The record gives the reactivity of an RNA of 207 nucleotides to 2A3. The reactions ran in a buffer of 150 mM KOAc, 10 mM MgCl2 and 150 mM bicine (pH 8.5), at 24 C.

RNA sequence: GGGAACGACUCGAGUAGAGUCGAAAAGGGGUCCCACUUGGAUUUAGCGUGGACAUGCUCGGUACUGAAGCCUCCACGGUACAGAGCAACAGCCACGCUUGUCAGUGGGACGGAGGCACCCAAAACGUCUCGAGACAGUUCGCUGUCUCGAGACGAACUGUCACUAAAGGUUCGCCUUUAGUGACAGAAAAGAAACAACAACAACAAC
Reactivity to 2A3 in 0.01 (KOAc 150mM, MgCl2 10mM, bicine 150mM(pH8.5), 24C), signal-to-noise 3, nucleotides 027 to 156: g050g040g030g000u010c000c090c000a010c010u120u290g270g000a080u300u300u150a020g020c000g010u000g010g010a110c050a150u160g010c000u010c010g000g020u000a000c010u000g020a150a030g040c010c020u030c010c010a040c000g010g020u000a000c020a000g010a000g000c020a040a120c050a120g030c010c010a000c000g000c000u000u010g000u000c010a000g000u000g000g000g000a000c010g000g000a000g020g020c020a050c000c000c020a010a030a010a040c020g000u010c000u000c000g010a010g000a000c000a010g020u120u170c230g080c180u010g000u030c000u010c010g000a010g010a000c010g000a000a000